Chemical mapping of a 177-nucleotide RNA with DMS and 2A3. The DMS profile rests on 3,905 reads. 2A3 adducts were read by reverse transcription with SuperScript II with manganese. The reactions ran in a buffer of 150 mM KOAc, 10 mM MgCl2 and 150 mM bicine (pH 8.5), at 24 C. The 2A3 profile rests on 7,483 reads. Source: RMDB library TTRDES, as collected in RNAgym.
RNA sequence: GGGAACGACUCGAGUAGAGUCGAAAAGAUAUGGACCGUCAACAAGGAGCCUGAGUAUCGGAAACGAUACUAGGCGCGAAACUUGUCGACGGUCCUAAGUCAAAACCCUCAUGUUCGCAUGAGGGAAGAUUCCAUUUGAGUUCGCUCAAAUGGAAUCAAAAGAAACAACAACAACAAC
Reactivity to DMS in 0.01 (KOAc 150mM, MgCl2 10mM, bicine 150mM(pH8.5), 24C), signal-to-noise 3, nucleotides 027 to 126: g010a020u010a300u000g000g010a020c000c000g000u000c010a080a020c010a010a010g030g000a230g000c000c000u010g020a020g020u000a000u000c020g000g000a080a070a170c000g020a020u000a010c000u010a010g000g000c010g030c180g010a110a110a220c010u010u000g000u000c020g010a020c000g010g020u000c000c000u010a010a060g000u000c050a070a090a090a110c010c000c000u000c000a020u000g000u010u010c240g040c000a010u000g000a010g010g020g000a010a010
Reactivity to 2A3 in 0.01 (KOAc 150mM, MgCl2 10mM, bicine 150mM(pH8.5), 24C), signal-to-noise 2, nucleotides 027 to 126: g020a020u020a020u060g000g010a000c000c000g000u010c000a020a020c000a010a020g220g060a110g100c040c080u250g290a010g010u010a000u000c000g000g000a060a010a020c010g010a000u000a010c000u000a000g000g000c010g000c000g270a290a130a300c030u000u000g010u020c020g000a000c000g000g000u000c000c000u010a000a000g000u010c000a000a020a060a140c000c010c000u000c000a010u010g090u080u100c300g000c200a000u000g000a010g020g010g000a000a000